[RMDB]
Structure probing data (2A3) for a 207-nucleotide construct. The 2A3 profile rests on 667 reads. The reactions ran in a buffer of 150 mM KOAc, 10 mM MgCl2 and 150 mM bicine (pH 8.5), at 24 C. For 2A3 the reverse transcriptase was SuperScript II with manganese.
RNA sequence: GGGAACGACUCGAGUAGAGUCGAAAAGGUCAAUUCGUUGACCAGGAGGGCGUACUACGUCAGCCAAGGCUUCGAUAAGUUGCUCCCAAAUAGGAGCAACUUUUGACGAAGCCUUGGAACUACUGACGUAUCGCAAAAGGGACACUUCGGUGUCCAAGGGAUCUCAUUACUUCGGUAAUGAGAUCCCAAAAGAAACAACAACAACAAC
Reactivity to 2A3 in 0.01 (KOAc 150mM, MgCl2 10mM, bicine 150mM(pH8.5), 24C), signal-to-noise 1, nucleotides 027 to 156: g000g000u000c000a000a010u120u140c230g050u230u000g070a020c030c000a020g120g150a020g020g130g000c010g080u000a110c020u000a000c020g000u000c000a000g000c000c000a000a000g010g010c000u010u000c000g070a050u000a110a000g000u000u020g010c000u000c000c090c010a160a200a070u300a040g010g000a000g000c000a000a000c000u000u000u000u010g160a020c010g000a000a000g000c000c000u030u000g000g020a000a060c000u240a090c000u010g000a020c000g020u000a020u280c000g000c000a090a090a000a000g000g040g010a040c040a000c000u080u070c110g070g000u000g000u010c000c000a000a000